[RMDB]
RNA sequence: GGGAACGACUCGAGUAGAGUCGAAAAGUCUCACGAGUGCAGAGACAAAGGUAGUUGACUCCGGAGCUACCAGUACUCGAAGGAAUGCGAAAGAGUUCAAGUAUUCCAACCGGAGAAGAACUCAAAACACUAGGUGAGGUUUCGACCUCACCUAGUGAAAAGAAACAACAACAACAAC
Reactivity to 2A3 in 0.01 (KOAc 150mM, MgCl2 10mM, bicine 150mM(pH8.5), 24C), signal-to-noise 4, nucleotides 027 to 126: g010u000c000u010c010a020c010g030a010g030u060g030c060a020g080a040g030a300c120a060a040a000g020g000u010a000g010u010u020g050a040c000u040c000c000g010g010a000g000c000u010a010c000c000a000g010u010a030c010u000c010g000a090a040g060g030a110a060u150g080c060g040a070a120a140g070a050g010u030u020c030a050a010g030u030a200u200u070c040c030a020a020c020c010g000g040a000g000a040a000g010a080a010c040u040c000a040a100a040a010
Reactivity to DMS in 0.01 (KOAc 150mM, MgCl2 10mM, bicine 150mM(pH8.5), 24C), signal-to-noise 2, nucleotides 027 to 126: g000u000c000u000c000a300c090g000a090g000u010g050c000a120g000a260g010a060c220a130a090a130g000g020u000a000g040u000u000g010a080c000u000c020c060g000g000a080g000c040u000a000c000c000a110g000u000a000c030u000c000g000a060a150g010g000a120a080u030g000c020g000a080a070a140g010a110g040u000u010c050a160a120g020u000a030u060u000c050c130a150a100c010c020g030g000a000g040a180a110g000a020a070c030u000c000a010a050a110a150